[RMDB]
RNA sequence: GGGAACGACUCGAGUAGAGUCGAAAACGCAAAAGCUUCAGCUUAGGAUCGUCCCCAUCCAGUCCGAAGACAAUGCGGCCUACUACAAGGCCCGCUUCACCCUCAAUGUCGGCGACAACCGCAUCGUGGACCUGGGCAGCUCGUACUUCGACAUCAGGUCAAGCUGAGCAUUCGUGCUCAGCUUGACAAAAGAAACAACAACAACAAC
Reactivity to 2A3 in 0.01 (KOAc 150mM, MgCl2 10mM, bicine 150mM(pH8.5), 24C), signal-to-noise 1, nucleotides 027 to 156: c060g040c040a000a000a040a090g030c000u170u150c080a070g020c000u220u220a100g010g020a070u010c070g020u080c050c000c000c000a010u030c070c000a040g100u070c180c050g000a000a000g040a020c030a100a050u220g020c040g000g000c000c020u010a120c010u010a040c070a110a040g000g040c160c170c010g040c000u080u050c020a050c070c000c000u010c050a010a010u110g070u180c020g080g100c030g080a070c030a030a060c000c120g010c020a000u000c000g000u020g010g040a040c000c010u020g000g030g000c050a050g030c000u020c110g000u020a180c010u050u020c010g020a000c080a030u170c170a090g000
This 207-nucleotide RNA was probed chemically with 2A3. It was measured as part of the RMDB library OK3TST. 2A3 adducts were read by reverse transcription with SuperScript II with manganese. Conditions: 150 mM KOAc, 10 mM MgCl2 and 150 mM bicine (pH 8.5), 24 C.